[RMDB]
Chemical mapping of a 177-nucleotide RNA with 2A3 and DMS. Reactivities are given for positions 27 through 126. The 2A3 profile rests on 1,854 reads.
RNA sequence: GGGAACGACUCGAGUAGAGUCGAAAAAAUAGCGCGUCAAGGUACAACGCAGAGAGAUAGGCUCAUCCCAAGUUCUCUUCGGAGUACCAAGACUUCGGUACAGAAGAGAUACCGACUCUUCAUAGAACCAUGUUCCAUCUUUCGAGAUGGAACAUGGAAAAGAAACAACAACAACAAC
Reactivity to 2A3 in 0.01 (KOAc 150mM, MgCl2 10mM, bicine 150mM(pH8.5), 24C), signal-to-noise 1, nucleotides 027 to 126: a020a000u180a020g070c090g000c030g050u010c020a040a010g010g000u020a030c010a020a000c020g000c050a010g010a000g010a000g000a030u070a130g100g000c000u020c020a110u100c030c000c000a000a040g070u050u010c000u020c000u000u010c000g000g000a010g010u000a010c000c000a000a000g000a010c000u050u080c030g040g020u070a060c040a060g020a010a010g020a030g010a050u030a130c020c020g080a060c010u000c000u030u030c030a000u110a140g140a030a030
Reactivity to DMS in 0.01 (KOAc 150mM, MgCl2 10mM, bicine 150mM(pH8.5), 24C), signal-to-noise 2, nucleotides 027 to 126: a110a060u000a080g000c040g050c300g010u000c030a020a060g000g000u000a000c020a040a210c030g000c110a030g000a040g060a100g010a060u010a050g000g000c070u000c220a030u010c170c010c000a040a080g000u000u000c010u000c000u000u000c000g000g020a300g010u000a000c000c000a050a270g000a030c090u000u000c030g000g000u000a050c230a100g000a000a000g000a020g000a150u000a090c030c090g020a150c030u000c000u000u000c040a100u040a050g000a070a150
For DMS the reverse transcriptase was MarathonRT.
Conditions: 150 mM KOAc, 10 mM MgCl2 and 150 mM bicine (pH 8.5), 24 C.
Source: RMDB library M2PK90, as collected in RNAgym.